[RMDB]
RNA sequence: GGGAACGACUCGAGUAGAGUCGAAAAUUCAGAAUACCAGUACGUUAUCUUCUGUCAAACAGCAGAUACGGCACAUGCUAACAACAUUAACAGAUUUAAUGUUGCAAUCACUCGUGCCCAAAAAGGUUAACAGUCUACUUCGGUAGACUGAAAAGAAACAACAACAACAAC
Reactivity to 2A3 in 0.01 (KOAc 150mM, MgCl2 10mM, bicine 150mM(pH8.5), 24C), signal-to-noise 9, nucleotides 027 to 129: u080u030c010a020g060a080a040u070a110c020c010a010g050u060a030c090g040u100u040a010u010c010u060u010c010u020g090u100c070a170a150a110c010a110g020c000a000g010a010u010a030c020g010g000c010a000c000a030u070g010c020u060a120a040c000a000a000c000a000u010u010a020a040c070a130g160a230u070u060u020a000a000u010g010u010u010g020c040a030a050u060c010a010c050u080c080g020u020g000c000c000c000a050a110a030a010a000g070g010u060u040a060a030
Reactivity to DMS in 0.01 (KOAc 150mM, MgCl2 10mM, bicine 150mM(pH8.5), 24C), signal-to-noise 9, nucleotides 027 to 129: u040u020c060a080g030a110a090u050a070c030c000a050g000u040a080c110g010u050u030a020u010c010u000u000c020u000g010u020c160a110a070a260c020a030g000c070a000g000a050u000a040c120g030g050c020a000c010a080u080g020c000u000a130a220c000a010a000c020a000u010u000a020a070c230a050g040a110u060u000u020a040a000u020g030u000u000g030c080a030a040u040c000a040c180u000c080g020u000g000c000c010c120a050a070a030a070a040g040g010u020u030a070a140
Chemical mapping of a 170-nucleotide RNA with 2A3 and DMS. For 2A3, 43,597 sequencing reads were counted. It was measured as part of the RMDB library 15KLIB. 2A3 adducts were read by reverse transcription with SuperScript II with manganese. The RNA was probed in 150 mM KOAc, 10 mM MgCl2 and 150 mM bicine (pH 8.5) at 24 C.